[RMDB]
Structure probing data (2A3 and DMS) for a 177-nucleotide construct.
Conditions: 150 mM KOAc, 10 mM MgCl2 and 150 mM bicine (pH 8.5), 24 C.
RNA sequence: GGGAACGACUCGAGUAGAGUCGAAAAUAUCAUGAUGGCUUGAAUACUAUCACUGGCAAAUAACUUAAUAUUAGGUACCAAUUGCAAUAAGUGUUCAUAGGCUGCUUUUAUGUGGUUUGGAUUGGUAAUAGUCACCAUUAUUCGUAAUGGUGACUAUAAAAGAAACAACAACAACAAC
Reactivity to 2A3 in 0.01 (KOAc 150mM, MgCl2 10mM, bicine 150mM(pH8.5), 24C), signal-to-noise 5, nucleotides 027 to 126: u090a010u020c040a040u070g080a030u060g050g000c060u060u070g040a030a020u050a060c010u010a030u170c040a040c090u030g040g040c030a050a040a070u130a060a030c020u100u110a060a050u170a260u300u160a060g030g030u040a060c030c010a020a140u040u030g030c010a040a080u110a250a010g010u020g010u090u030c010a030u060a090g060g000c010u020g010c010u180u100u050u050a110u160g040u000g000g100u020u070u070g050g000a050u040u070g000g010u030a050
Reactivity to DMS in 0.01 (KOAc 150mM, MgCl2 10mM, bicine 150mM(pH8.5), 24C), signal-to-noise 7, nucleotides 027 to 126: u010a060u000c040a050u000g000a120u010g000g000c060u000u000g010a070a050u000a050c030u000a070u000c050a070c140u000g000g010c050a050a070a080u000a070a050c050u010u000a060a150u010a160u010u000a030g000g020u010a060c100c050a030a080u000u000g010c090a050a070u000a060a060g010u000g000u000u000c040a060u000a090g010g010c040u000g010c070u010u000u010u000a040u000g020u000g000g020u000u000u010g010g000a130u000u000g000g010u010a070

For 2A3 the reverse transcriptase was SuperScript II with manganese.